[RMDB]
RNA sequence: GGGAACGACUCGAGUAGAGUCGAAAAGAUAUGGAAGUGGAACUACAAUUGUCCCAGUGAUGACCUCGGAAACGAGCAAGCUGAACCAAUUGCCACUUCCUAAGUCAAAGCGAUGUUCGCAUCGCAACCAUUUCCUACGGUUCGCCGUAGGAAAUGGAAAAGAAACAACAACAACAAC
Reactivity to 2A3 in 0.01 (KOAc 150mM, MgCl2 10mM, bicine 150mM(pH8.5), 24C), signal-to-noise 2, nucleotides 027 to 126: g020a010u050a020u130g020g000a000a000g000u000g010g030a110a060c080u200a070c300a030a020u000u020g080u130c120c090c000a010g020u040g110a300u170g040a060c030c010u000c020g020g080a070a100a070c010g030a010g010c010a070a050g000c030u000g030a020a000c070c000a020a010u010u010g010c000c010a000c000u000u000c000c000u000a060a000g030u000c070a080a100a030g010c000g010a000u020g020u090u160c300g010c130a020u020c000g020c000a020a020
Reactivity to DMS in 0.01 (KOAc 150mM, MgCl2 10mM, bicine 150mM(pH8.5), 24C), signal-to-noise 2, nucleotides 027 to 126: g010a030u000a300u000g020g000a020a010g030u000g010g010a060a040c080u010a300c110a020a000u000u000g040u030c170c130c010a010g000u000g010a110u000g000a120c300c030u000c020g000g000a050a110a170c000g000a010g010c020a040a190g030c000u020g000a030a100c240c020a000a010u000u000g050c040c000a010c000u000u000c000c000u000a000a030g000u010c040a080a060a050g000c000g000a030u000g000u010u010c150g020c030a040u000c020g010c000a100a110